[RMDB]
RNA sequence: GGGAACGACUCGAGUAGAGUCGAAAAUUAUGGAGGUAAAAUCCUUCUGUCAAAGCCAGGAGACAGUUGGUCUUAGGUUGACAUCCUAUCUGUGAUCUGAUUGGCUCCCCAUCUCCUGCUCUUGGCCAUUUAUAAUUGCCUCUGAUGUAAUGGUACAAUUCCUAUAGCGGUUCGCCGCUAUAGGAAUAAAAGAAACAACAACAACAAC
Reactivity to DMS in 0.01 (KOAc 150mM, MgCl2 10mM, bicine 150mM(pH8.5), 24C), signal-to-noise 2, nucleotides 027 to 156: u020u010a030u000g020g020a010g030g030u000a060a090a140a130u010c030c010u000u010c030u000g020u000c030a030a080a130g030c190c030a050g000g010a060g000a060c020a040g030u010u000g030g010u010c040u010u000a060g020g020u010u010g010a200c050a110u000c030c040u000a140u010c070u000g000u010g000a040u000c030u010g000a100u000u000g030g010c030u000c010c000c010c020a300u000c050u000c040c010u000g030c000u000c030u000u000g000g000c000c000a060u010u000u000a040u010a120a130u010u000g000c010c030u000c050u000g020a160u000g000u000a070a050u000g010g020u000a020c080a100
Reactivity to 2A3 in 0.01 (KOAc 150mM, MgCl2 10mM, bicine 150mM(pH8.5), 24C), signal-to-noise 1, nucleotides 027 to 156: u110u080a060u220g040g000a060g000g000u070a000a060a060a140u090c010c020u030u050c050u060g020u030c010a060a060a050g020c030c010a030g060g030a000g000a060c050a040g040u010u120g040g010u000c070u080u010a060g000g050u020u030g040a030c010a080u070c010c050u110a060u090c050u060g010u050g110a110u080c030u030g040a110u130u170g060g010c040u040c000c000c000c000a010u000c000u000c030c000u010g000c010u000c010u030u010g000g000c000c010a000u060u130u010a140u080a110a090u050u050g020c020c000u000c060u040g050a020u050g010u070a060a030u110g050g040u170a020c020a010